[RMDB]
RNA sequence: GGGAACGACUCGAGUAGAGUCGAAAAAGGAGUUGCUUUAAAACAAAUAGUUGGUACAGUGGAUAAAGAGAAGCCAGUUGGCUCUUGGGGCACAUGUCAAACCAAAAGGUAGAGAAGGGAAUUGGCUUAAGGUGUGUGUGCACAGCAGGAAAUACCACGGGCUAAAUUAGUUCGCUAAUUUAGCCCGAAAAGAAACAACAACAACAAC
Reactivity to 2A3 in 0.01 (KOAc 150mM, MgCl2 10mM, bicine 150mM(pH8.5), 24C), signal-to-noise 1, nucleotides 027 to 156: a000g060g000a020g030u090u030g040c020u070u110u140a130a200a020a000c040a020a100a120u210a030g070u000u060g010g030u100a060c030a040g000u020g040g020a050u050a130a130a020g090a040g030a130a000g030c000c080a040g030u060u060g040g000c000u050c040u040u010g000g000g010g060c040a040c000a080u060g060u030c020a030a020a110c020c000a120a200a020a020g050g030u150a040g000a030g000a110a040g030g000g000a040a040u080u030g020g010c010u020u040a030a010g050g030u030g000u020g000u010g000u020g000c040a060c060a030g070c010a010g060g120a010a000a080u210a030c010c230a010

Notes:
Chemical mapping of a 207-nucleotide RNA with 2A3. The RNA was probed in 150 mM KOAc, 10 mM MgCl2 and 150 mM bicine (pH 8.5) at 24 C. 2A3 adducts were read by reverse transcription with SuperScript II with manganese. Source: RMDB library OK3TST, as collected in RNAgym.